RNA sequence: GGGAACGACUCGAGUAGAGUCGAAAAGAUAUGGAAUGAAGUGGUAGUCGACGUAAGUUCGAUGAGUACGGGUCGGAAACGACCCAUAGUACGAGAAUACGUCGACUACCACUUCAUUCCUAAGUCAGUUCUCAAAGAAGUUCGCUUCUUUGAGAACAAAAGAAACAACAACAACAAC
Reactivity to DMS in 0.01 (KOAc 150mM, MgCl2 10mM, bicine 150mM(pH8.5), 24C), signal-to-noise 2, nucleotides 027 to 126: g020a010u010a300u000g000g010a000a000u000g020a020a030g020u000g010g030u010a030g010u000c010g010a010c010g020u010a040a080g000u000u000c010g020a140u000g000a170g030u000a190c090g020g000g020u000c000g000g000a100a050a300c010g030a000c010c000c020a010u000a140g020u000a040c000g000a180g000a060a060u010a020c000g020u000c000g000a020c000u000a010c000c000a000c010u000u000c000a010u000u000c000c000u010a000a090g000u030c050a190
This 177-nucleotide RNA was probed chemically with DMS. For DMS the reverse transcriptase was MarathonRT. Values cover nucleotides 27 to 126.